[RMDB]
RNA sequence: GGGAACGACUCGAGUAGAGUCGAAAAGAUAUGGACCUCCGACGAUCUAAGUCAGUCGGAAACGACUGAGCUUAGGGAGGAGAGUCCUAAGUCAAAAUCCCGCAUAGAGUUCGCUCUAUGCGGGAAACUAUAACGACUUGUUCGCAAGUCGUUAUAGAAAAGAAACAACAACAACAAC
Reactivity to 2A3 in 0.01 (KOAc 150mM, MgCl2 10mM, bicine 150mM(pH8.5), 24C), signal-to-noise 2, nucleotides 027 to 126: g020a000u080a060u130g000g010a010c000c000u000c010c020g220a300c010g020a040u010c000u010a000a010g020u010c000a010g000u010c010g020g000a030a020a010c000g010a000c020u010g010a020g160c000u000u000a000g000g000g000a010g020g010a010g030a050g000u000c000c000u020a080a020g060u030c010a000a010a030a300u010c010c000c000g010c000a010u000a000g030a000g030u080u140c190g050c120u000c000u010a010u010g000c000g000g000g020a010a000a000
Reactivity to DMS in 0.01 (KOAc 150mM, MgCl2 10mM, bicine 150mM(pH8.5), 24C), signal-to-noise 3, nucleotides 027 to 126: g000a050u000a300u010g010g000a010c010c000u000c000c000g000a120c240g000a030u000c000u000a010a010g000u000c000a010g000u000c010g010g020a060a050a150c000g010a010c000u000g000a060g010c000u000u000a000g000g000g010a030g000g000a010g000a100g010u000c000c000u000a020a060g010u000c040a120a090a150a140u000c010c000c000g000c010a010u000a000g000a010g010u010u010c230g010c000u000c000u000a010u000g010c000g000g000g000a000a000a030
Structure probing data (2A3 and DMS) for a 177-nucleotide construct. DMS adducts were read by reverse transcription with MarathonRT. Conditions: 150 mM KOAc, 10 mM MgCl2 and 150 mM bicine (pH 8.5), 24 C. For DMS, 4,216 sequencing reads were counted. It was measured as part of the RMDB library TTRDEL.